[RMDB]
This 177-nucleotide RNA was probed chemically with 2A3 and DMS.
The data come from the RNA Mapping Database (RMDB), library RFM100.
Reactivities are given for positions 27 through 126.
For DMS the reverse transcriptase was MarathonRT.
RNA sequence: GGGAACGACUCGAGUAGAGUCGAAAAUUAGUAACACUUCCUAGUAGGUAUUAGGUGGUAAGCCGAGCUCUUCCUCGGUCUUGUUCUGAAUGCACACAUGUCUAGGGGCUAAGGAUGUCCUACAGGUGCUUUUGUCGAAUUUCGAUUCGACAAAAGCAAAAGAAACAACAACAACAAC
Reactivity to 2A3 in 0.01 (KOAc 150mM, MgCl2 10mM, bicine 150mM(pH8.5), 24C), signal-to-noise 2, nucleotides 027 to 126: u070u030a020g090u070a100a040c000a030c060u110u150c000c020u000a000g000u040a040g210g020u040a060u100u060a130g070g000u040g090g040u070a030a000g000c000c000g000a010g010c060u030c040u100u050c060c000u000c020g000g000u040c020u020u020g040u040u000c030u080g090a080a010u110g010c010a050c020a030c030a140u050g020u120c000u010a020g020g040g000g000c000u020a040a040g100g060a090u060g030u010c010c000u000a050c030a050g040g000u030
Reactivity to DMS in 0.01 (KOAc 150mM, MgCl2 10mM, bicine 150mM(pH8.5), 24C), signal-to-noise 1, nucleotides 027 to 126: u010u040a020g000u050a050a010c140a080c150u000u000c030c070u000a000g040u000a060g000g030u010a090u000u000a000g000g100u010g010g000u020a110a010g020c030c000g090a050g000c300u000c030u010u020c200c000u000c060g030g000u000c020u000u050g000u070u060c010u030g030a040a020u000g000c000a100c090a060c080a110u030g000u040c050u000a100g080g000g100g000c000u000a080a070g050g000a220u050g000u000c000c050u000a030c250a000g000g000u000